[RMDB]
RNA sequence: GGGAACGACUCGAGUAGAGUCGAAAAUAAUAGGCAUGAGUGCGGUAUAGGAAAAUCUAAAAAUACCAAUUCCUAGGCAAGUCGCUAAAAAGACAAGCAGGCUCAUUCGAUAGAAUGUAGACAUGAACUAUACUGGUCCGUUCGCGGACCAGUAUAGAAAAGAAACAACAACAACAAC
Reactivity to DMS in 0.01 (KOAc 150mM, MgCl2 10mM, bicine 150mM(pH8.5), 24C), signal-to-noise 1, nucleotides 027 to 126: u000a060a070u000a080g020g020c080a030u010g010a080g060u000g000c060g010g010u000a080u000a070g020g000a080a060a200a090u000c200u030a000a070a050a080a000u000a090c010c020a050a220u010u000c000c020u000a020g000g010c040a040a230g040u000c040g010c210u000a020a060a060a080a060g000a010c080a000a240g000c030a120g010g000c020u020c010a010u000u000c050g000a170u040a070g000a020a000u000g000u020a060g000a050c110a060u010g000a100a240